[RMDB]
RNA sequence: GGGAACGACUCGAGUAGAGUCGAAAAAAGGCGUGUCUGUGGUUUCCUGUCUUUGGACACGUAAGAAUUGGAGGCAAAGAAAUAUGGACUUGGAGACGUCUGGGGCCAGCUUGCUCCCUGCAGGCUCCCUGCUCCGAAAUUUCGAUUUCGGAGCAGGAAAAGAAACAACAACAACAAC
Reactivity to 2A3 in 0.01 (KOAc 150mM, MgCl2 10mM, bicine 150mM(pH8.5), 24C), signal-to-noise 4, nucleotides 027 to 126: a010a000g110g000c030g010u040g050u000c000u010g120u110g080g010u020u050u090c000c020u050g070u040c030u090u070u080g040g030a020c020a000c040g060u060a020a070g060a060a100u130u110g050g010a020g010g020c030a050a080a000g070a010a110a040u230a120u180g010g030a020c010u070u100g020g000a070g010a020c020g010u040c050u060g000g000g010g000c000c000a020g020c010u060u030g000c030u050c000c010c000u040g000c000a010g010g000c000u030c000
Reactivity to DMS in 0.01 (KOAc 150mM, MgCl2 10mM, bicine 150mM(pH8.5), 24C), signal-to-noise 2, nucleotides 027 to 126: a080a020g000g000c020g010u000g010u000c060u010g010u010g010g000u020u030u000c000c020u000g000u020c020u000u000u010g000g010a090c040a050c050g010u000a060a120g000a080a120u000u040g000g000a150g000g020c040a020a060a080g010a040a030a030u010a120u030g000g000a040c020u000u010g000g030a040g000a030c060g000u000c040u010g020g000g010g000c090c120a070g010c010u020u000g030c060u010c050c000c000u010g000c000a050g000g000c000u020c090